[RMDB]
RNA sequence: GGGAACGACUCGAGUAGAGUCGAAAAGGGGUCCAUAGUGGCACCUGACAUGACGUGUACUGAAGCCUCCACGGUACGCCGUCAACAGCAGGUGCGUAACAUCUAUGGACGGAGGCACCCAAACAACGUUCUAAUCGUUCGCGAUUAGAACGUUGAAUCGCUUAAGUAUGUUCGCAUACUUAAGCGAAAAAGAAACAACAACAACAAC
Reactivity to 2A3 in 0.01 (KOAc 150mM, MgCl2 10mM, bicine 150mM(pH8.5), 24C), signal-to-noise 5, nucleotides 027 to 156: g120g010g040g010u010c000c000a000u000a010g020u030g060g000c000a000c000c000u050g050a140c100a240u060g000a000c000g010u010g000u010a000c000u020g030a080a020g000c000c000u030c000c000a020c020g000g000u010a010c010g040c140c130g030u000c010a090a100c080a130g110c000a000g000g000u010g010c000g000u000a000a010c020a180u110c000u000a000u000g000g000a000c000g000g000a000g000g000c010a040c000c010c020a020a100a050c010a000a000c000g010u010u000c000u000a000a000u010c010g060u080u070c280g010c010g130a000u000u000a000g000a000a000c000g000u000u000g000a010a040
Reactivity to DMS in 0.01 (KOAc 150mM, MgCl2 10mM, bicine 150mM(pH8.5), 24C), signal-to-noise 2, nucleotides 027 to 156: g020g010g030g000u000c000c010a030u010a030g020u000g070g010c000a010c000c010u020g000a110c040a170u000g020a020c000g030u000g040u010a030c000u000g010a020a110g020c000c020u000c020c010a290c010g000g010u000a020c000g000c070c080g030u000c020a120a150c110a120g030c020a030g000g030u020g030c010g020u000a040a070c120a050u010c010u020a030u000g000g020a010c010g020g020a030g100g030c000a190c010c000c020a130a120a220c010a010a010c000g000u010u000c000u000a030a000u000c000g010u000u000c300g020c020g000a030u000u000a010g020a000a040c000g000u000u010g010a060a120